[RMDB]
RNA sequence: GGGAACGACUCGAGUAGAGUCGAAAAGGAUUAGAAUGCCCAGAUUGAAACUCUAUACCUUCAAUUUUGGUCGCCAACUUGAUGUGAACAUUAGGUUGUGCCAGGCAGCUCAUGUGCCUGAUUGAGAGACACCCUCGUAAUUCGUUACGAGGGUGUCAAAAGAAACAACAACAACAAC
Reactivity to DMS in 0.01 (KOAc 150mM, MgCl2 10mM, bicine 150mM(pH8.5), 24C), signal-to-noise 2, nucleotides 027 to 126: g000g010a170u010u010a110g000a110a040u000g000c200c000c020a020g010a020u000u000g000a000a040a070c090u010c170u010a080u010a150c300c050u010u010c030a010a050u000u000u010u010g000g000u000c050g000c000c010a020a010c000u000u000g000a000u010g010u000g000a150a160c030a020u000u000a000g000g000u010u000g000u010g000c010c020a010g000g000c000a000g030c040u000c070a050u020g020u010g000c010c000u000g000a060u000u000g000a160g020a240
Reactivity to 2A3 in 0.01 (KOAc 150mM, MgCl2 10mM, bicine 150mM(pH8.5), 24C), signal-to-noise 2, nucleotides 027 to 126: g070g000a020u170u130a120g060a180a050u040g000c010c000c000a000g000a020u030u050g050a090a080a090c040u070c050u170a130u060a230c000c050u020u010c020a040a040u030u020u090u090g020g010u020c020g030c010c000a010a000c000u050u010g000a010u000g090u080g270a180a070c020a000u000u010a020g000g000u030u020g000u060g040c000c010a010g020g000c000a000g000c010u090c080a060u230g010u010g000c010c000u000g020a020u000u200g040a150g010a030